[RMDB]
RNA sequence: GGGAACGACUCGAGUAGAGUCGAAAAUGCAAGUAGUGCUAUUGUUGGAAUCACCGUACCUAUUUAGGUUUACGGUCCAAGAUCGGUGGAUAGCAGCCCUAUCAAUAUCUAGGAGAACUGUGCUAUGAAAACGGUAUUGGCUUCGGCCAAUACCGAACUAAUGAGUAGUCUUCGGACUACUCAUUAGAAAAGAAACAACAACAACAAC
Reactivity to 2A3 in 0.01 (KOAc 150mM, MgCl2 10mM, bicine 150mM(pH8.5), 24C), signal-to-noise 6, nucleotides 027 to 156: u150g000c030a050a070g080u090a020g070u120g050c020u040a050u060u110g080u040u030g040g040a110a080u120c050a030c030c000g000u010a010c000c000u080a150u300u200u250a040g000g000u060u100u100a010c000g020g020u000c010c010a080a020g050a070u100c100g020g050u050g050g030a020u020a030g000c020a010g020c040c000c020u070a080u100c080a120a050u040a050u180c090u040a050g030g040a070g020a090a060c050u080g020u030g100c010u050a030u150g100a030a030a020a060c010g000g000u010a000u000u000g000g000c000u010u050c210g050g000c000c000a000a000u000a000c000c000g000a000a000
Reactivity to DMS in 0.01 (KOAc 150mM, MgCl2 10mM, bicine 150mM(pH8.5), 24C), signal-to-noise 3, nucleotides 027 to 156: u000g020c050a070a130g020u000a070g020u000g030c040u000a040u000u000g030u000u000g000g000a080a160u010c040a060c000c010g020u000a040c020c000u000a250u010u000u010a020g030g000u000u010u000a020c020g000g030u000c020c030a050a100g010a090u000c020g030g020u000g010g010a120u000a080g010c010a090g010c040c020c010u010a160u000c060a080a150u000a110u010c110u010a060g010g010a100g030a060a080c050u000g030u000g020c050u000a060u000g000a110a090a060a150c000g050g040u000a010u000u000g020g000c020u010u010c300g070g030c010c000a010a010u000a000c010c010g010a010a040